[RMDB]
RNA sequence: GGGAACGACUCGAGUAGAGUCGAAAAUUGCUCAGGCAGCGUAACGCUGCUUGAAAAACCACAUGAAAGUCCUGGCGGGUUAAGCGCCGCCAGGCGGGGUUCGGAGGCGCCUGGCAACAGAAGCCUCAUUACAUGGAAGACUUCGGUCUUCCAUGAAGUAUCCAUUAUUCUUCGGAAUAAUGGAUACAAAAGAAACAACAACAACAAC
Reactivity to 2A3 in 0.01 (KOAc 150mM, MgCl2 10mM, bicine 150mM(pH8.5), 24C), signal-to-noise 2, nucleotides 027 to 156: u070u070g020c010u000c010a000g000g030c030a010g000c040g140u210a120a070c210g000c030u000g030c000u000u000g000a000a000a000a000a020c070c020a060c010a130u250g130a120a000a060g300u010c010c010u010g000g010c000g030g000g000u070u170a150a050g040c200g060c050c000g010c000c000a000g000g000c010g000g010g000g000u130u300c100g060g000a000g000g000c020g010c000c000u020g300g010c010a020a000c010a030g000a010a000g000c000c000u000c000a000u010u000a020c010a000u000g000g000a000a000g000a000c010u040u050c270g130g020u030c000u010u000c000c000a000u000g000a000a010
Conditions: 150 mM KOAc, 10 mM MgCl2 and 150 mM bicine (pH 8.5), 24 C. This 207-nucleotide RNA was probed chemically with 2A3.